[RMDB]
RNA sequence: GGGAACGACUCGAGUAGAGUCGAAAAAGUGCGGUGGCAAUUCGUUCAUUAAUUUUGCAUAAAGAUGAACCUAUGUAUUUAAAAAAACGUACAUGUGUACCUACUUUGUUAAUUAAUGGGGAACAUGCCUGCUUCCAGAGUUCGCUCUGGAAGCAGGAAAAGAAACAACAACAACAAC
Reactivity to 2A3 in 0.01 (KOAc 150mM, MgCl2 10mM, bicine 150mM(pH8.5), 24C), signal-to-noise 2, nucleotides 027 to 126: a000g230u020g030c020g000g000u040g040g100c050a060a030u190u090c050g030u000u000c000a000u000u050a110a110u090u200u200u300g090c080a090u030a070a060a040g140a160u090g050a090a030c000c000u050a000u000g100u050a120u040u250u300a210a140a120a130a000a000a000c050g050u020a000c030a020u010g060u080g100u210a170c020c020u130a250c010u030u000u100g030u030u120a120a000u040u080a030a050u070g000g010g000g000a060a000c050a000u060g030